[RMDB]
RNA sequence: GGGAACGACUCGAGUAGAGUCGAAAACAUAUGGAUGACCUGCGUCUAUACAGUUGCAAUGUGCUUUAGACACUUCUUCUGGGUUUUAGCUUAUUUUAGUAAGAAACAUGUAGAAGUUUUUACUGAUUAGUAAAUACCAGUUCGCUGGUAUUUACUAAAAAGAAACAACAACAACAAC
Reactivity to DMS in 0.01 (KOAc 150mM, MgCl2 10mM, bicine 150mM(pH8.5), 24C), signal-to-noise 2, nucleotides 027 to 126: c080a110u010a060u000g000g010a070u010g000a150c110c080u000g010c090g010u010c010u010a040u010a070c080a060g020u010u000g000c080a070a120u000g000u000g000c030u020u000u000a100g000a070c080a060c020u000u000c010u000u010c060u010g000g020g020u010u000u000u000a180g000c010u000u000a100u040u000u000u000a040g020u000a030a070g000a050a030a030c030a020u020g000u000a090g000a050a090g000u000u000u010u000u010a110c050u000g000a180u020
Annotation
The record gives the reactivity of an RNA of 177 nucleotides to DMS. DMS (dimethyl sulfate) methylates the pairing face of unpaired adenines and cytosines. The RNA was probed in 150 mM KOAc, 10 mM MgCl2 and 150 mM bicine (pH 8.5) at 24 C. Values cover nucleotides 27 to 126. DMS adducts were read by reverse transcription with MarathonRT.